[RMDB]
RNA sequence: GGGAACGACUCGAGUAGAGUCGAAAAGAAAAGAAAGAAAGAUGAUGUCUCCGUACCGUUAUCAAUGGAGGCAAACUCGCACAUGGCGAAGGUGGGAACGAUGACGGUAAGGCCACCAGAAAAGAAAGCAGUCAUAUAGCUUCGGCUAUAUGACUGCAAAAGAAACAACAACAACAAC
Reactivity to 2A3 in 0.01 (KOAc 150mM, MgCl2 10mM, bicine 150mM(pH8.5), 24C), signal-to-noise 2, nucleotides 027 to 126: g050a020a000a000a010g110a010a040a000g050a060a140a020g020a020u160g110a090u040g010u000c020u010c000c030g050u040a030c000c050g020u030u000a070u170c120a130a070u220g040g000a020g010g000c000a030a100a000c000u000c030g060c000a090c050a050u170g120g040c020g030a020a000g030g070u050g000g010g000a010a000c020g020a000u010g030a000c010g000g000u020a040a030g030g000c010c000a000c030c000a000g190a010a080a010a000g130a000a110a000
Reactivity to DMS in 0.01 (KOAc 150mM, MgCl2 10mM, bicine 150mM(pH8.5), 24C), signal-to-noise 1, nucleotides 027 to 126: g070a090a030a030a080g000a090a120a090g050a010a030a020g000a090u030g000a050u000g000u000c000u010c000c000g030u000a070c060c040g000u000u000a050u050c140a120a050u000g110g040a030g060g000c040a000a020a090c090u020c060g000c030a140c230a200u050g050g020c140g000a030a080g000g000u000g000g000g000a100a000c300g000a040u000g000a000c030g020g000u000a050a140g000g000c040c000a000c030c070a260g020a020a000a200a020g010a110a060a270